[RMDB]
RNA sequence: GGGAACGACUCGAGUAGAGUCGAAAACAGCCUCGCUUCUAUUCCAUUUCUUCGUCGCCGCGCCGCGUUAGUGACGAAAUCCACCUCACGGUGGCCAUCGUGAAGUACCGCUGUGAAGAUGGCCAGACGGCCAUCAUAUGUUCGCAUAUGAUGGCCGAAAAGAAACAACAACAACAAC
Reactivity to 2A3 in 0.01 (KOAc 150mM, MgCl2 10mM, bicine 150mM(pH8.5), 24C), signal-to-noise 2, nucleotides 027 to 126: c020a000g020c010c030u080c050g000c000u060u030c020u080a130u090u030c030c020a070u080u080u090c050u050u040c040g040u020c020g010c020c010g060c060g060c090c080g060c020g060u090u100a040g010u030g040a010c020g000a020a000a010u040c030c010a040c020c020u070c040a060c030g100g040u030g010g000c000c000a010u030c010g020u000g090a080a020g030u050a160c020c080g010c020u020g010u030g040a030a010g020a020u020g010g020c010c000a030g020a040
Reactivity to DMS in 0.01 (KOAc 150mM, MgCl2 10mM, bicine 150mM(pH8.5), 24C), signal-to-noise 4, nucleotides 027 to 126: c060a070g000c030c020u010c120g020c020u000u000c020u000a150u000u000c030c040a100u010u000u000c090u000u000c040g010u000c030g030c020c020g020c040g040c060c070g010c050g040u010u010a070g020u020g000a050c030g020a020a060a110u000c030c010a060c060c030u010c090a080c100g020g020u010g000g010c070c020a020u000c020g000u010g000a070a050g020u000a080c130c120g010c030u010g020u010g010a080a200g010a020u000g000g010c060c030a110g000a150